[RMDB]
RNA sequence: GGGAACGACUCGAGUAGAGUCGAAAAACGAGCUCCCAGGUUACUGCCAAAUUUGCGAUAAAACGGGAGCUGCAAUGAAUAUGUUCGUGGCGAUUGUUAAGAAUUAAUCGUGACUGCUGAUAGUUGCCGAUCAUUGUUGGUUCGCCAACAAUGAUCGAAAAGAAACAACAACAACAAC
Reactivity to DMS in 0.01 (KOAc 150mM, MgCl2 10mM, bicine 150mM(pH8.5), 24C), signal-to-noise 3, nucleotides 027 to 126: a100c130g010a000g000c010u010c000c000c000a120g000g010u000u000a030c060u000g000c050c300a060a120a210u020u070u020g000c020g000a070u010a000a020a060a090c040g000g000g000a030g050c000u010g000c030a050a040u020g000a120a090u030a090u020g000u000u000c220g010u000g010g020c040g000a010u010u010g000u010u030a100a140g000a110a120u050u030a030a050u000c010g000u000g010a020c010u010g020c030u010g010a070u000a150g000u000u000g000c060
Reactivity to 2A3 in 0.01 (KOAc 150mM, MgCl2 10mM, bicine 150mM(pH8.5), 24C), signal-to-noise 4, nucleotides 027 to 126: a010c110g000a020g000c000u000c000c000c000a000g010g120u050u070a040c050u080g010c020c000a080a130a300u230u280u210g040c030g050a050u140a080a120a000a010c020g000g000g000a000g000c000u000g020c000a020a020u030g060a050a030u170a040u210g030u020u040c050g000u020g060g000c020g000a050u000u030g090u070u130a250a180g110a150a160u120u180a070a040u010c010g000u010g300a020c010u000g010c030u040g070a050u050a030g030u020u020g000c030